[RMDB]
RNA sequence: GGGAACGACUCGAGUAGAGUCGAAAAGAUAUGGAAUAUGUGUAGACAUGAAGGGAGGGUCGGAAACGACCCGAACUUCAACAGCUACACCGCUAUUCCUAAGUCAAAAUCGUGCUUCGGCACGAAACUCUCUGUAAAUCUUCGGAUUUACAGAGAGAAAAGAAACAACAACAACAAC
Reactivity to DMS in 0.01 (KOAc 150mM, MgCl2 10mM, bicine 150mM(pH8.5), 24C), signal-to-noise 2, nucleotides 027 to 126: g020a030u000a300u000g000g020a000a000u010a000u010g000u000g010u000a050g000a030c050a230u000g000a000a010g010g000g030a300g000g000g080u020c000g020g000a180a080a170c000g010a020c010c000c000g020a180a140c020u000u000c010a060a050c300a100g020c020u000a020c000a020c000c000g040c000u010a000u000u000c010c000u010a020a160g020u000c040a060a070a190a140u010c000g010u000g000c000u000u000c270g010g000c000a000c000g010a000a140a110
Reactivity to 2A3 in 0.01 (KOAc 150mM, MgCl2 10mM, bicine 150mM(pH8.5), 24C), signal-to-noise 2, nucleotides 027 to 126: g010a010u040a060u160g000g040a020a000u020a020u190g000u010g020u000a000g030a130c080a180u090g010a000a030g050g010g040a070g010g000g000u010c010g040g020a040a080a050c000g000a000c000c000c000g000a000a000c000u000u010c000a000a010c020a020g020c000u010a000c010a000c000c000g000c000u010a010u000u030c010c000u020a200a000g030u040c030a000a030a010a300u080c020g000u000g000c010u090u100c300g180g020c000a000c000g000a020a000a020